[RMDB]
RNA sequence: GGGAACGACUCGAGUAGAGUCGAAAAGAUAUGGAGAUGGCAAACGAUGAGUAUACAUCGGAAACGAUGUCAUACGAGUUUGCAUCUCCUAAGUCAAAACUUUCGCUGCCUUCGGGCAGCGAAAGAAUCAUUCUAGAGCGUUCGCGCUCUAGAAUGAAAAAGAAACAACAACAACAAC
Reactivity to DMS in 0.01 (KOAc 150mM, MgCl2 10mM, bicine 150mM(pH8.5), 24C), signal-to-noise 1, nucleotides 027 to 126: g000a000u000a030u010g000g000a020g010a020u010g010g020c000a010a020a010c000g000a200u010g020a090g020u000a000u000a000c010a000u010c000g010g000a000a000a020c000g000a000u000g000u010c300a010u000a000c000g010a000g010u000u000u000g010c000a010u010c000u000c000c000u010a000a070g000u020c000a170a040a210a170c010u000u010u000c010g040c000u000g010c010c000u000u010c250g030g010g040c000a010g040c000g000a020a000a000g000a120a130
Reactivity to 2A3 in 0.01 (KOAc 150mM, MgCl2 10mM, bicine 150mM(pH8.5), 24C), signal-to-noise 1, nucleotides 027 to 126: g010a000u020a010u040g010g000a030g000a000u090g300g300c000a010a000a000c030g140a300u300g030a010g020u010a010u000a000c020a020u010c020g000g020a000a000a000c010g000a000u000g000u030c070a010u050a010c000g030a030g000u030u000u000g020c000a000u000c000u060c010c000u000a000a000g000u000c010a020a040a100a160c000u000u000u040c010g000c080u000g000c060c040u100u100c300g100g020g020c000a000g010c030g000a000a010a000g000a000a000

The record gives the reactivity of an RNA of 177 nucleotides to DMS and 2A3. Conditions: 150 mM KOAc, 10 mM MgCl2 and 150 mM bicine (pH 8.5), 24 C. Values cover nucleotides 27 to 126. Source: RMDB library TTRDES, as collected in RNAgym.